[RMDB]
RNA sequence: GGGAACGACUCGAGUAGAGUCGAAAAGCAAUAACAGGUCUGUGAUGCCCUUAGAUGUCCUGGGCCGCACGCGUGCUACACUGAUGAGUAGAAUGGGUUAAUACUGCAUUUAUUGCUUUCCCUUGACGAUACAGAAGCUGUUCGCAGCUUCUGUAUCAAAAGAAACAACAACAACAAC
Reactivity to 2A3 in 0.01 (KOAc 150mM, MgCl2 10mM, bicine 150mM(pH8.5), 24C), signal-to-noise 3, nucleotides 027 to 126: g020c000a010a020u020a050a000c000a050g010g050u000c040u090g020u060g010a050u060g010c000c000c000u080u130a170g010a230u210g120u170c040c060u020g010g000g020c000c030g010c000a010c010g060c010g050u060g000c010u030a030c050a030c060u220g100a180u120g030a140g030u030a010g020a060a110u060g000g060g040u050u090a080a050u110a170c030u020g070c040a040u050u020u020a020u060u000g000c000u010u020u050c000c000c000u000u120g040a000c030
Reactivity to DMS in 0.01 (KOAc 150mM, MgCl2 10mM, bicine 150mM(pH8.5), 24C), signal-to-noise 3, nucleotides 027 to 126: g000c030a000a010u000a050a060c110a030g000g010u000c130u000g020u000g010a120u000g000c000c010c040u010u000a130g010a140u010g000u010c110c090u010g010g010g000c010c060g000c070a020c070g010c050g020u010g040c040u000a020c020a070c060u000g010a120u010g010a070g030u000a010g000a090a040u000g020g000g020u010u010a080a110u010a050c040u000g000c260a050u000u010u010a010u000u000g000c000u000u000u000c010c000c000u000u010g020a200c220